[RMDB]
RNA sequence: GGGAACGACUCGAGUAGAGUCGAAAAGCACUCCUUUUCGAAGGAGUGCCCAGGCGCGCGGCCUUUGUCCUGUCGCGUGUGCGCGGCGCGCGAUAUACGCGCAUCUGUGCAUAUUCGUAUGCACAAACCAUACUAGUUUUUUCGAAAACUAGUAUGGAAAAGAAACAACAACAACAAC
Reactivity to DMS in 0.01 (KOAc 150mM, MgCl2 10mM, bicine 150mM(pH8.5), 24C), signal-to-noise 8, nucleotides 027 to 126: g010c010a010c010u000c000c000u000u000u000u020c160g010a020a010g010g000a020g020u000g000c000c040c090a050g010g010c040g010c020g010c020g000g010c020c060u010u000u010g010u010c050c050u000g010u000c020g010c010g010u010g020u010g020c040g020c050g000g000c030g010c070g020c010g000a080u000a070u010a090c020g010c000g010c040a090u010c130u000g020u000g000c000a010u000a020u000u010c170g010u000a010u000g000c000a010c000a040a080a200
Reactivity to 2A3 in 0.01 (KOAc 150mM, MgCl2 10mM, bicine 150mM(pH8.5), 24C), signal-to-noise 8, nucleotides 027 to 126: g010c000a000c000u010c010c000u030u030u040u110c220g110a010a000g000g000a000g000u000g000c010c010c000a020g030g000c020g000c010g000c010g050g120c020c000u100u100u140g070u030c000c030u030g010u050c010g000c020g020u040g040u070g040c100g000c030g090g000c010g000c000g000c010g020a010u040a020u030a180c010g010c000g010c010a030u050c080u100g000u000g000c010a000u010a030u040u090c210g080u040a000u010g000c000a000c000a000a020a020